RNA sequence: GGGAACGACUCGAGUAGAGUCGAAAACUCGUGUGCCAAGUGUGAGCGGACGCGAAGCGCUGCGAGCCAGUCGGUCACGUACCGAAGCCCUUCCGAGGGGCAUCCCUGUUGGAGUCGUUUCCGGCCCACACUGAGAAAUGUUCGCAUUUCUCAGUGUAAAAGAAACAACAACAACAAC
Reactivity to 2A3 in 0.01 (KOAc 150mM, MgCl2 10mM, bicine 150mM(pH8.5), 24C), signal-to-noise 2, nucleotides 027 to 126: c010u010c020g000u030g050u100g010c000c030a100a040g030u050g020u060g170a070g070c050g050g080a100c020g000c030g070a120a050g040c030g010c030u090g020c010g000a000g020c000c040a040g080u080c030g000g000u020c040a040c300g070u090a030c010c030g030a090a030g000c000c000c000u050u050c180c130g080a170g030g010g000g010c000a000u010c000c000c010u040g120u080u190g070g010a010g000u020c000g000u010u010u000c010c000g000g050c010c000c000
Reactivity to DMS in 0.01 (KOAc 150mM, MgCl2 10mM, bicine 150mM(pH8.5), 24C), signal-to-noise 1, nucleotides 027 to 126: c030u000c000g050u000g030u010g000c000c050a060a300g020u030g030u030g010a180g020c060g010g020a180c010g000c020g010a170a180g020c050g010c020u000g050c020g010a110g000c010c050a130g000u000c040g000g030u000c010a140c200g000u000a030c020c040g000a030a110g000c030c030c000u010u010c120c130g000a130g000g020g010g020c020a070u000c000c000c010u000g010u000u000g020g000a040g010u000c000g000u000u000u000c000c010g020g000c030c040c020